Structure probing data (DMS and 2A3) for a 177-nucleotide construct. It was measured as part of the RMDB library TTRDES. The DMS profile rests on 16,180 reads. Conditions: 150 mM KOAc, 10 mM MgCl2 and 150 mM bicine (pH 8.5), 24 C.

[RMDB]
RNA sequence: GGGAACGACUCGAGUAGAGUCGAAAAGAUAUGGACCACCUGAGGGAGAAUCCGUGUCGGAAACGACAUUGAUUCGAGGAUCUCACAUGGUGGUCCUAAGUCAAAACAACACAGUUCGCUGUGUUGACUGGUAAGUAUACUUCGGUAUACUUACCAGAAAAGAAACAACAACAACAAC
Reactivity to DMS in 0.01 (KOAc 150mM, MgCl2 10mM, bicine 150mM(pH8.5), 24C), signal-to-noise 8, nucleotides 027 to 126: g010a040u000a300u010g010g000a020c000c000a010c000c010u010g000a040g000g010g010a030g010a030a000u000c010c110g020u000g010u000c000g000g000a090a090a180c000g010a020c000a000u000u000g000a000u000u000c010g010a090g030g000a070u000c000u000c010a130c300a110u010g010g020u010g000g000u010c000c000u000a000a070g010u000c030a100a100a130a290c010a010a010c000a010c000a010g000u000u000c290g020c000u000g010u000g000u000u000g010a150
Reactivity to 2A3 in 0.01 (KOAc 150mM, MgCl2 10mM, bicine 150mM(pH8.5), 24C), signal-to-noise 6, nucleotides 027 to 126: g010a000u060a030u130g000g000a000c000c000a010c000c030u050g000a010g010g030g010a080g010a010a000u010c020c020g020u000g010u000c010g020g020a060a040a040c010g000a000c010a010u010u030g010a000u010u010c010g030a130g000g030a020u010c010u040c010a090c070a240u270g010g000u000g000g000u000c000c000u000a000a000g000u000c000a000a010a030a090c020a010a010c000a000c000a000g030u170u200c300g050c190u000g010u010g000u020u020g020a160